[RMDB]
RNA sequence: GGGAACGACUCGAGUAGAGUCGAAAACGCUCCAAGCUGACGAACCCCCCGUUCAGCCCGACCGCUGCGCCUUAUCCGGUAACUAUCGUCUUGAGUCCAACACGACUUAACGGGUUGGCAUGGAUUGGUGUACCAUGGGAUUCGUCCCAUGGUACACAAAAGAAACAACAACAACAAC
Reactivity to DMS in 0.01 (KOAc 150mM, MgCl2 10mM, bicine 150mM(pH8.5), 24C), signal-to-noise 2, nucleotides 027 to 126: c120g050c080u000c020c080a040a100g000c030u000g010a020c040g010a100a300c030c010c000c010c020c020g000u000u000c060a090g000c040c090c040g040a090c060c070g010c050u000g000c140g020c040c020u040u000a110u000c030c010g010g010u010a030a080c100u040a140u010c020g010u000c020u000u000g010a100g010u000c000c060a030a030c080a020c040g010a170c140u000u000a080a090c040g000g000g020u000u010g000g020c010a070u020g020g010a130u000u000g030